RNA sequence: GGGAACGACUCGAGUAGAGUCGAAAAGGGCAUGGGGCUGACCAUGCUCACCGGGGGGAUUAACUUAUCUAUCAUUGCCGGUGCUAAUGCGUGCUCGCUAGUGAUGGCGGCGAUCAUUGUCAGCCAAGACUGCAUGAGGGUUCGCCCUCAUGCAGUCAAAAGAAACAACAACAACAAC
Reactivity to 2A3 in 0.01 (KOAc 150mM, MgCl2 10mM, bicine 150mM(pH8.5), 24C), signal-to-noise 2, nucleotides 027 to 126: g010g000g020c000a010u010g020g000g030g010c000u010g020a010c000c000a020u020g000c000u000c040a000c010c010g000g010g000g020g040g020a010u030u120a070a060c040u050u060a010u050c020u020a030u050c010a110u090u160g120c010c000g060g000u020g000c040u100a140a020u100g020c030g050u080g030c080u110c120g020c020u060a060g060u040g150a070u140g050g000c020g000g000c010g010a050u120c000a020u040u130g000u000c000a000g010c000c000a010a020
Reactivity to DMS in 0.01 (KOAc 150mM, MgCl2 10mM, bicine 150mM(pH8.5), 24C), signal-to-noise 2, nucleotides 027 to 126: g010g000g030c000a010u000g000g020g050g020c030u010g000a000c020c000a000u000g000c020u000c000a000c000c000g000g010g020g000g010g000a060u010u010a080a150c280u010u000a060u010c110u010a060u010c050a110u010u020g020c030c020g000g010u000g000c220u010a030a030u000g010c240g020u000g010c070u010c040g000c010u010a030g010u000g000a210u010g010g000c090g010g000c020g000a050u010c050a050u000u010g000u000c020a020g020c000c020a170a150

The record gives the reactivity of an RNA of 177 nucleotides to 2A3 and DMS. DMS adducts were read by reverse transcription with MarathonRT. It was measured as part of the RMDB library OK2TST. The RNA was probed in 150 mM KOAc, 10 mM MgCl2 and 150 mM bicine (pH 8.5) at 24 C.